[RMDB]
RNA sequence: GGGAACGACUCGAGUAGAGUCGAAAAUUGCCGCGAGACUUAGAGACACUGUUGAGUCCCAGCUGACGCCGCAGCAAUCAGGCUUUCGCCCCGGAUGCUCAACGCUCGAACAACUCCUGCACGUCCGGCUCGUUCGAGGAUUCGUCCUCGAACGAGCAAAAGAAACAACAACAACAAC
Reactivity to 2A3 in 0.01 (KOAc 150mM, MgCl2 10mM, bicine 150mM(pH8.5), 24C), signal-to-noise 2, nucleotides 027 to 126: u090u050g010c020c010g010c050g030a030g000a090c090u090u170a100g000a000g020a090c030a030c160u130g030u070u020g020a060g020u040c000c010c020a040g010c030u050g000a010c050g000c030c010g000c010a050g000c010a010a040u150c020a030g000g040c000u040u080u020c080g020c000c000c000c000g000g050a060u050g020c000u000c050a000a040c010g010c020u020c030g000a030a030c030a040a030c030u050c050c000u000g060c050a050c030g050u050c070c040g000
Chemical mapping of a 177-nucleotide RNA with 2A3. Conditions: 150 mM KOAc, 10 mM MgCl2 and 150 mM bicine (pH 8.5), 24 C. Reactivities are rounded to 0.1 and cut off at 0 and 3.